[RMDB]
RNA sequence: GGGAACGACUCGAGUAGAGUCGAAAACAUUUUUAAGAUUGGUAAUCUGAGUCUGAAGCUCUCUCUUAGUUUGAAGUAAUCGCUGAACGGAUGGAGAAGCCAGUGAUAUGGGAUGAGCAGUAGGGGACGGAAUUAACGUAUUCGUACGUUAAUUCCGAAAAGAAACAACAACAACAAC
Reactivity to DMS in 0.01 (KOAc 150mM, MgCl2 10mM, bicine 150mM(pH8.5), 24C), signal-to-noise 4, nucleotides 027 to 126: c040a100u010u000u000u000u000a100a080g020a040u000u010g020g010u010a070a070u000c010u000g010a130g000u000c030u000g010a210a170g000c020u000c050u000c020u010c030u010u000a070g010u010u010u000g010a080a140g010u000a070a050u000c100g000c030u000g010a090a070c060g020g010a100u010g010g010a090g020a070a110g000c070c040a030g010u000g000a040u010a100u000g000g010g000a040u020g010a060g010c010a040g010u000a120g000g000g010g010a240
Reactivity to 2A3 in 0.01 (KOAc 150mM, MgCl2 10mM, bicine 150mM(pH8.5), 24C), signal-to-noise 3, nucleotides 027 to 126: c010a040u110u130u090u110u230a100a090g010a110u030u120g090g050u110a060a060u000c050u050g020a010g090u010c010u020g050a100a030g020c000u000c000u000c000u010c000u100u080a060g060u120u150u160g060a080a000g010u140a090a100u080c040g020c050u010g000a050a010c030g100g110a080u120g060g000a100g030a050a020g050c020c000a010g010u040g050a050u020a040u120g060g020g010a050u120g000a040g000c010a020g050u070a020g010g000g000g020a010